[RMDB]
The record gives the reactivity of an RNA of 177 nucleotides to 2A3 and DMS. Values cover nucleotides 27 to 126.
RNA sequence: GGGAACGACUCGAGUAGAGUCGAAAAGAUAUGGAUACAGCGAUAAGACUCGGUCGGAAACGACCGGGAGGUCUUUUGACGCUGAUCCUAAGUCAAACUUGUUAAUUUGUUCGCAAAUUAACAAGAAGAAUUACCCCUAGUUCGCUAGGGGUAAUUCAAAAGAAACAACAACAACAAC
Reactivity to 2A3 in 0.01 (KOAc 150mM, MgCl2 10mM, bicine 150mM(pH8.5), 24C), signal-to-noise 3, nucleotides 027 to 126: g030a030u080a020u130g000g020a020u230a300c000a000g000c010g060a060u110a170a010g020a010c020u030c110g000g000u000c040g000g030a110a060a040c030g000a010c040c060g030g090g000a060g020g060u060c020u020u120u090u130g160a070c020g010c010u010g000a000u000c000c010u020a090a000g040u020c020a020a040a130c020u010u000g000u030u010a000a020u020u000u020g040u030u090c300g010c200a010a010a010u010u000a000a010c000a000a000g020a020a030
Reactivity to DMS in 0.01 (KOAc 150mM, MgCl2 10mM, bicine 150mM(pH8.5), 24C), signal-to-noise 3, nucleotides 027 to 126: g000a030u000a300u010g000g000a010u000a120c010a000g030c000g030a140u000a030a020g010a040c000u000c000g000g010u000c000g010g000a070a100a200c000g020a000c000c000g020g000g010a040g010g000u000c010u000u000u000u000g010a200c030g020c000u010g010a070u000c010c010u000a030a160g010u000c020a100a130a180c000u000u000g000u000u000a000a000u010u000u010g010u000u010c220g010c000a010a010a010u010u000a000a000c000a010a020g000a100a070
The reactions ran in a buffer of 150 mM KOAc, 10 mM MgCl2 and 150 mM bicine (pH 8.5), at 24 C.